[RMDB]
RNA sequence: GGGAACGACUCGAGUAGAGUCGAAAACCCCUGUGGUGCUGGAUGCUGUUGUGCAUGAACAGCUCUCCAGUGGAUUCGAUGGGCCCCAGCAAUCUUGUGAUUUAUGCAGGGAGGGUGCUUCUCCUCAAACUCCAGCUGAAUUCGUUCAGCUGGAGUUAAAAGAAACAACAACAACAAC
Reactivity to DMS in 0.01 (KOAc 150mM, MgCl2 10mM, bicine 150mM(pH8.5), 24C), signal-to-noise 2, nucleotides 027 to 126: c070c000c010c080u000g020u020g000g010u000g010c020u010g010g000a030u030g010c000u000g000u000u000g020u040g020c200a110u040g000a050a050c010a020g000c010u000c190u000c000c010a000g010u000g000g000a170u020u010c100g010a080u010g020g000g000c010c010c020c000a140g000c100a060a040u000c050u030u000g020u010g020a100u020u010u030a030u000g000c020a040g020g000g000a070g020g000g010u010g000c060u000u020c010u010c000c030u000c050a120
Reactivity to 2A3 in 0.01 (KOAc 150mM, MgCl2 10mM, bicine 150mM(pH8.5), 24C), signal-to-noise 4, nucleotides 027 to 126: c020c000c000c010u040g060u090g030g080u060g050c010u020g000g010a010u020g000c010u000g000u020u020g090u090g100c080a060u130g060a030a000c000a020g000c010u020c090u000c010c010a010g000u030g010g030a060u090u100c080g010a040u080g030g000g030c000c000c000c000a040g010c040a030a080u060c020u070u120g070u080g110a140u090u020u180a090u190g040c000a020g060g000g000a050g020g010g000u050g040c000u040u010c020u000c000c000u050c040a100
The record gives the reactivity of an RNA of 177 nucleotides to DMS and 2A3. For 2A3 the reverse transcriptase was SuperScript II with manganese. The data come from the RNA Mapping Database (RMDB), libraries RFM100 and RFMREP. The reactions ran in a buffer of 150 mM KOAc, 10 mM MgCl2 and 150 mM bicine (pH 8.5), at 24 C.